[RMDB]
RNA sequence: GGGAACGACUCGAGUAGAGUCGAAAAAGCGAGUACACACUCCUAGAAAAUAGGAGUGAUCCACGCGUAAAGUACUCGCAAGUAGAAAAUCAAAGUAUCCGAUAAGGAUACACGCGUGGGCUACAAAGCGUAAUGCCCUGUUCGCAGGGCAUUACGCAAAAGAAACAACAACAACAAC
Reactivity to 2A3 in 0.01 (KOAc 150mM, MgCl2 10mM, bicine 150mM(pH8.5), 24C), signal-to-noise 1, nucleotides 027 to 126: a000g010c100g000a000g000u000a000c100a010c000a000c080u000c000c000u030a050g220a050a260a090a000u010a000g000g000a000g000u000g010a000u000c070c000a000c000g000c000g020u000a000a120a120g000u000a000c000u000c000g030c020a070a000g120u200a010g040a090a000a090a000u050c070a250a000a000g000u000a000u000c010c000g000a140u120a300a000g010g000a000u000a000c000a000c000g100c070g000u020g020g080g000c000u100a120c050a000a300a000